[RMDB]
An RNA of 177 nucleotides, treated with DMS and 2A3 and read out base by base.
2A3 adducts were read by reverse transcription with SuperScript II with manganese.
Conditions: 150 mM KOAc, 10 mM MgCl2 and 150 mM bicine (pH 8.5), 24 C.
RNA sequence: GGGAACGACUCGAGUAGAGUCGAAAAGUUGCGCGUGACAAACGGUCAGAGACUAACGUACUCGUCAUCUCUACGCUAGUGUUAAUCCUGUCCGAAUAGCGUCAGUGGUGUUAGGCACGGCAUUGAAGCACAAUUUGCAGUUCGCUGCAAAUUGUGCAAAAGAAACAACAACAACAAC
Reactivity to DMS in 0.01 (KOAc 150mM, MgCl2 10mM, bicine 150mM(pH8.5), 24C), signal-to-noise 2, nucleotides 027 to 126: g000u000u000g030c040g030c070g010u010g000a060c100a080a160a190c080g020g000u000c050a020g000a140g010a020c020u010a030a020c080g010u010a100c050u010c030g000u000c120a070u000c040u030c090u000a030c000g000c130u020a010g020u000g030u000u000a040a080u000c010c010u000g000u000c000c000g000a080a140u000a100g020c000g000u020c070a050g000u020g010g010u010g020u000u000a160g020g020c060a050c020g000g010c030a080u010u000g020a090a090
Reactivity to 2A3 in 0.01 (KOAc 150mM, MgCl2 10mM, bicine 150mM(pH8.5), 24C), signal-to-noise 1, nucleotides 027 to 126: g060u070u030g000c180g000c060g110u050g020a050c000a010a190a020c060g000g000u070c030a010g100a020g000a060c010u030a040a000c060g040u050a020c010u020c040g100u020c030a170u020c230u000c010u080a020c100g000c040u000a020g010u060g010u180u090a050a030u000c030c010u000g000u130c000c000g090a100a120u110a080g060c040g110u020c030a000g070u060g120g020u070g010u050u130a090g000g090c040a010c000g000g000c010a030u010u160g060a070a000

Source: RMDB library OK2TRN, as collected in RNAgym.